[RMDB]
An RNA of 177 nucleotides, treated with DMS and read out base by base. For DMS, 936 sequencing reads were counted. It was measured as part of the RMDB library OK2TST.
RNA sequence: GGGAACGACUCGAGUAGAGUCGAAAAAGACGUUGAUAUAGCCGGACGCAACUUGCUUGAGCUUCGAACGCGCUGCCGCAGCAUCGAAAGAUACAUCCAGCAUGAAAUCUUCGUUCUGGAGAACGAAUAUAAUGGCGUGGUUCGCCACGCCAUUAUAAAAAGAAACAACAACAACAAC
Reactivity to DMS in 0.01 (KOAc 150mM, MgCl2 10mM, bicine 150mM(pH8.5), 24C), signal-to-noise 2, nucleotides 027 to 126: a100g000a080c130g030u010u010g020a100u020a070u000a070g020c030c000g020g030a140c100g010c070a040a030c050u000u010g000c070u020u010g000a150g000c050u000u010c060g010a060a120c090g040c050g000c040u010g010c080c090g010c030a080g070c060a040u010c080g000a080a060a060g010a060u010a050c120a060u020c010c030a090g020c080a070u030g030a030a100a070u010c050u010u010c000g010u010u020c010u000g030g010a120g010a030a070c040g010a040a060